The data come from the RNA Mapping Database (RMDB), library OK2TRN.
Chemical mapping of a 177-nucleotide RNA with DMS.

RNA sequence: GGGAACGACUCGAGUAGAGUCGAAAAGCACCGCCGCAGUGCAGCCAACCGCCGACCGCACACACGCUGCCCGAGCCUGCUGCUGUCGCAGUCCUACCCGGUCCGGGGCCGGACCCGGGUAGGCGUACCCGCGUAAUUUAUUCGUAAAUUACGCGGGAAAAGAAACAACAACAACAAC
Reactivity to DMS in 0.01 (KOAc 150mM, MgCl2 10mM, bicine 150mM(pH8.5), 24C), signal-to-noise 1, nucleotides 027 to 126: g020c020a070c040c010g000c040c060g000c110a140g050u000g020c020a110g030c090c000a140a100c150c020g030c030c030g010a050c070c060g010c030a040c090a090c110a100c110g000c050u000g010c010c010c020g010a080g010c040c030u000g010c050u010g030c050u000g000u000c090g010c100a080g010u000c000c000u010a010c000c000c000g060g010u000c000c010g040g020g010g020c240c000g010g000a020c050c020c030g000g000g050u000a000g000g010c070g010u000a030